[RMDB]
RNA sequence: GGGAACGACUCGAGUAGAGUCGAAAAUGCGACAAAACUUUUAGAAGGAGUUAUUAUGGGAAGUAUCGGUAGUAUGGGCAAACCUAUUGAAGGGUUUUUAGUGGCAGCCAUUCAGUUUCCUGUGCCACAUAAUUAAGCCGUUCGCGGCUUAAUUAUGAAAAGAAACAACAACAACAAC
Reactivity to 2A3 in 0.01 (KOAc 150mM, MgCl2 10mM, bicine 150mM(pH8.5), 24C), signal-to-noise 1, nucleotides 027 to 126: u090g030c000g000a000c010a080a120a080a050c010u060u120u110u270a110g060a200a070g050g020a010g020u100u010a070u100u120a050u240g030g030g000a090a040g030u040a030u150c070g040g000u020a030g020u040a150u090g010g000g030c010a030a020a140c000c000u090a110u010u170g070a100a100g000g010g000u040u020u000u000u160a070g040u060g000g000c010a000g040c000c050a000u100u090c000a020g010u010u080u050c000c000u050g030u050g150c000c010a020
Reactivity to DMS in 0.01 (KOAc 150mM, MgCl2 10mM, bicine 150mM(pH8.5), 24C), signal-to-noise 2, nucleotides 027 to 126: u010g010c040g010a110c070a070a110a110a070c030u000u000u010u010a100g010a100a140g010g010a070g000u010u010a100u000u000a060u010g010g010g000a070a080g010u010a060u000c070g010g020u000a040g010u010a050u010g010g000g010c080a020a050a040c030c030u010a140u010u010g000a090a110g010g000g000u010u010u000u020u010a090g030u010g010g000c030a090g010c050c040a040u010u000c090a090g010u000u000u010c020c020u000g020u010g000c030c030a080